[RMDB]
RNA sequence: GGGAACGACUCGAGUAGAGUCGAAAAGUCUGGACUGCCCCACAAGGCGCUGCUGAUACUCUCGUUUACGAAGCCUACUCCCAUUUGAAAGGAGUCCAAAUUCGCAUUGAUGCCAACACCGAUACAACAACUCGUAGCAUGCCUAUUCCCAUGGGCGCCUCUACAGUAACUUCGGUUACUGUAGAGGAAAAGAAACAACAACAACAAC
Reactivity to 2A3 in 0.01 (KOAc 150mM, MgCl2 10mM, bicine 150mM(pH8.5), 24C), signal-to-noise 5, nucleotides 027 to 156: g020u010c040u040g050g000a100c050u090g010c010c000c020c020a050c020a040a050g030g000c030g000c040u050g010c010u040g030a050u060a170c020u010c010u020c060g050u020u090u090a080c070g060a070a000g010c000c020u020a020c020u050c010c010c030a120u120u070u140g160a140a100a030g030g000a020g010u000c010c010a050a130a060u100u070c040g000c050a030u010u160g030a030u110g080c000c020a050a020c020a030c020c030g040a050u070a190c100a120a010c010a050a050c090u020c060g030u030a020g030c040a030u130g020c010c000u030a070u050u010c000c000c000a010u030g000g010g000c030g040
Reactivity to DMS in 0.01 (KOAc 150mM, MgCl2 10mM, bicine 150mM(pH8.5), 24C), signal-to-noise 1, nucleotides 027 to 156: g020u010c000u010g000g000a070c020u000g020c050c010c010c040a140c110a060a080g040g040c020g050c050u000g030c050u020g000a100u000a030c050u010c000u010c020g020u020u000u010a040c030g020a090a110g030c020c020u000a120c010u010c000c020c000a230u000u010u000g000a080a160a150g020g010a080g030u000c050c040a040a060a220u000u010c070g030c030a120u010u000g020a080u000g000c000c010a080a050c020a100c070c020g000a160u000a070c030a040a070c050a060a080c030u000c030g060u010a050g000c020a120u010g000c010c000u020a230u000u000c030c020c000a190u000g000g010g000c080g010